[RMDB]
RNA sequence: GGGAACGACUCGAGUAGAGUCGAAAAACACACUACCACGCCUGGCGAAUUUUUGUAUUUUUAGUAGUGACUGGGUUUCACCAUGUUGGUCAGGCUGGUCUUGAACUCCUGACCUCAGGCAAUGUGCUCGCCUUGGCCUCCCAAAGUGCUGGGAUGAAAAUUGUCUGUAAUUCGUUACAGACAAUUUAAAAGAAACAACAACAACAAC
Reactivity to DMS in 0.01 (KOAc 150mM, MgCl2 10mM, bicine 150mM(pH8.5), 24C), signal-to-noise 3, nucleotides 027 to 156: a070c040a090c060a070c030u000a070c020c010a070c140g010c030c020u000g010g020c020g010a050a040u000u010u010u000u020g010u000a060u010u000u010u000u000a080g020u000a040g010u000g020a090c050u010g010g020g010u000u000u000c050a050c060c030a090u000g020u010u010g010g010u000c010a020g010g010c090u000g020g010u000c020u000u000g010a070a070c020u000c010c000u000g010a020c000c010u000c050a040g000g030c030a070a040u000g020u000g010c020u000c080g020c040c020u010u000g020g020c020c020u000c000c010c010a010a090a130g030u010g010c020u000g000g020g020a070u000g000a070
Reactivity to 2A3 in 0.01 (KOAc 150mM, MgCl2 10mM, bicine 150mM(pH8.5), 24C), signal-to-noise 3, nucleotides 027 to 156: a000c100a010c010a030c060u060a010c010c020a030c080g020c000c010u010g030g000c030g080a080a050u060u150u040u200u140g090u110a220u030u110u010u040u120a050g040u020a020g010u040g060a030c040u040g100g010g030u000u120u000c020a040c030c000a060u090g050u100u100g090g020u040c050a030g010g020c020u060g010g020u020c030u100u170g020a030a010c010u010c020c010u040g030a060c010c020u020c030a020g000g000c000a010a050u140g020u040g040c000u030c030g010c010c000u020u030g020g020c000c010u020c000c000c000a040a100a010g090u090g010c030u020g050g010g010a020u060g030a020